[RMDB]
RNA sequence: GGGAACGACUCGAGUAGAGUCGAAAAGGUGAUUUUUUCCGCCAAGACGUUCACGGACCGGCGAGACCAGAGCUCCAUGCGGCGGUACUCGGAGAGGCCCUCACUUUCGGCUCUUCGGACCUCAACACAAGGCUGGUCCACGGCGAAUAGCACGGUCACUUCGUUAGGAGUUCGCUCCUAACGAAGUAAAAGAAACAACAACAACAAC
Reactivity to 2A3 in 0.01 (KOAc 150mM, MgCl2 10mM, bicine 150mM(pH8.5), 24C), signal-to-noise 1, nucleotides 027 to 156: g040g030u070g130a250u140u000u000u000u090u090c060c000g000c040c020a060a020g090a120c060g090u070u090c050a040c120g100g120a090c010c000g000g020c080g020a100g030a020c030c030a000g010a000g020c010u020c040c010a110u110g020c010g020g000c010g000g050u040a170c030u040c080g000g020a020g020a030g180g190c000c020c000u050c010a090c050u080u240u250c040g000g000c000u010c000u000u000c000g000g000a010c000c010u080c110a090a060c100a000c000a140a120g050g010c000u000g020g000u000c010c010a000c010g000g010c020g010a050a020u060a070g030c050a000c120g050g030u030c000

This 207-nucleotide RNA was probed chemically with 2A3. Source: RMDB library OK3TST, as collected in RNAgym. The 2A3 profile rests on 666 reads. Conditions: 150 mM KOAc, 10 mM MgCl2 and 150 mM bicine (pH 8.5), 24 C.